[RMDB]
Description
This 207-nucleotide RNA was probed chemically with 2A3.
RNA sequence: GGGAACGACUCGAGUAGAGUCGAAAAGCAGGUGAAAGCCAUAUUUGGAAGGAAGGAAAGAAGAAAGAAGAAUUCAUAAGUAACCCAGAAAUAGUUUUUGCUAACAUUUGGUCCAAUUCUAUCAUUUUGGACUUCCUCUUUUCCACUGAAGAUAGCAUGGCCUUUUAUCAUUCGUGAUAAAAGGCCAAAAAGAAACAACAACAACAAC
Reactivity to 2A3 in 0.01 (KOAc 150mM, MgCl2 10mM, bicine 150mM(pH8.5), 24C), signal-to-noise 1, nucleotides 027 to 156: g010c030a030g030g010u110g020a010a000a000g000c000c030a080u110a090u100u020u110g000g000a040a000g000g000a140a000g000g020a010a010a010g020a000a030g000a000a030a070g010a010a020g020a020a050u100u050c080a080u040a180a140g100u030a030a050c000c010c010a010g150a010a030a020u090a030g060u000u000u090u180u300g030c070u030a050a010c010a070u060u140u120g020g000u000c030c000a020a000u100u060c020u160a220u070c050a070u060u000u000u000g000g000a010c010u000u050c000c050u110c010u040u020u050u130c020c170a110c020u000g020a040a000g090a030u170a040g040c070a080
The data come from the RNA Mapping Database (RMDB), library OK3TST.